An RNA of 207 nucleotides, treated with DMS and 2A3 and read out base by base. The data come from the RNA Mapping Database (RMDB), library OK3TST. Reactivities are given for positions 27 through 156. Conditions: 150 mM KOAc, 10 mM MgCl2 and 150 mM bicine (pH 8.5), 24 C. The DMS profile rests on 1,612 reads.
RNA sequence: GGGAACGACUCGAGUAGAGUCGAAAAGCAGGAGUGCAUCUUCAUUACAUCUACGAUGGAGACGCGACAGAACUCAGUCGUGUUUACGAUGACGGCAUCGAAGUCAAGGUAUUUACCGGAAACAGUUCUCUACGACGAAGACUGAGUAAAUGCAACACAGUGAUCAAACGUUCGCGUUUGAUCACUGAAAAGAAACAACAACAACAAC
Reactivity to DMS in 0.01 (KOAc 150mM, MgCl2 10mM, bicine 150mM(pH8.5), 24C), signal-to-noise 1, nucleotides 027 to 156: g020c050a030g000g000a110g020u000g020c010a050u000c000u010u020c020a060u000u000a100c110a160u040c220u000a120c100g020a020u000g070g000a000g090a030c010g070c050g010a080c120a030g000a150a090c040u010c070a130g000u000c000g020u000g000u000u000u000a120c090g050a140u020g040a070c150g080g090c110a080u000c080g010a160a070g000u000c000a050a050g010g000u000a110u010u010u010a050c050c010g070g010a210a060a090c030a040g000u000u000c050u000c120u000a040c000g050a120c040g000a120a140g000a070c010u010g030a080g010u000a020a000a040u000g050c020a040a110c030a150
Reactivity to 2A3 in 0.01 (KOAc 150mM, MgCl2 10mM, bicine 150mM(pH8.5), 24C), signal-to-noise 3, nucleotides 027 to 156: g050c040a040g020g110a060g080u130g010c020a050u000c000u020u010c000a000u010u070a080c090a220u150c070u120a080c210g010a020u000g000g010a020g000a000c010g000c010g040a000c020a020g120a090a000c010u010c000a000g000u000c000g010u000g070u110u040u080a030c030g020a030u060g100a030c080g060g050c030a040u080c040g070a070a030g030u030c020a020a020g030g000u040a190u150u230u070a050c000c000g050g040a050a030a000c010a020g010u050u010c060u010c040u040a080c050g010a010c040g040a080a030g010a000c010u000g000a000g000u000a000a030a010u060g030c000a060a060c070a030